[RMDB]
RNA sequence: GGGAACGACUCGAGUAGAGUCGAAAAAGUCUCCUACUGUCGGGUAAAUUGCAACCGGCCUACACAGCGGCGGCUAAGCACGGUGUACCGAAAAGGUUUCUACCAUUCUGCUUCGACUUUGCGAUCCUAGAUAGUAGGUAUUAUACGCAAGACGUAAACACACUUUAGGUUUCGACCUAAAGUGUGUAAAAGAAACAACAACAACAAC
Reactivity to DMS in 0.01 (KOAc 150mM, MgCl2 10mM, bicine 150mM(pH8.5), 24C), signal-to-noise 2, nucleotides 027 to 156: a150g000u010c020u000c000c000u000a060c020u000g020u010c000g000g030g020u000a060a060a080u000u000g010c030a080a100c180c040g060g000c010c030u000a140c100a030c080a110g010c060g000g000c030g040g040c020u010a050a110g000c020a070c060g000g030u000g060u000a040c040c030g000a080a100a160a170g000g010u000u000u000c050u010a040c010c020a230u000u000c040u010g040c030u010u000c050g000a090c100u010u010u000g000c040g010a060u000c010c010u000a090g020a030u010a030g010u000a030g000g010u000a010u000u000a110u000a070c070g000c060a070a100g010a300c020g020u000a100a100
Reactivity to 2A3 in 0.01 (KOAc 150mM, MgCl2 10mM, bicine 150mM(pH8.5), 24C), signal-to-noise 4, nucleotides 027 to 156: a000g070u030c040u020c020c000u010a010c010u000g010u000c010g000g010g030u140a120a140a060u040u030g010c020a050a050c020c030g290g000c040c020u180a150c280a030c020a110g130c080g070g000c010g020g000c010u010a000a000g020c010a010c080g010g010u010g000u010a000c020c000g080a200a110a050a130g050g030u090u210u010c040u090a030c000c000a040u190u070c040u100g000c000u000u020c040g090a120c000u060u060u010g000c020g000a030u040c000c010u080a260g000a030u010a010g020u000a000g000g000u000a030u030u140a060u030a030c100g030c070a110a070g060a060c030g040u090a060a130

Chemical mapping of a 207-nucleotide RNA with DMS and 2A3. The 2A3 profile rests on 3,196 reads. DMS adducts were read by reverse transcription with MarathonRT.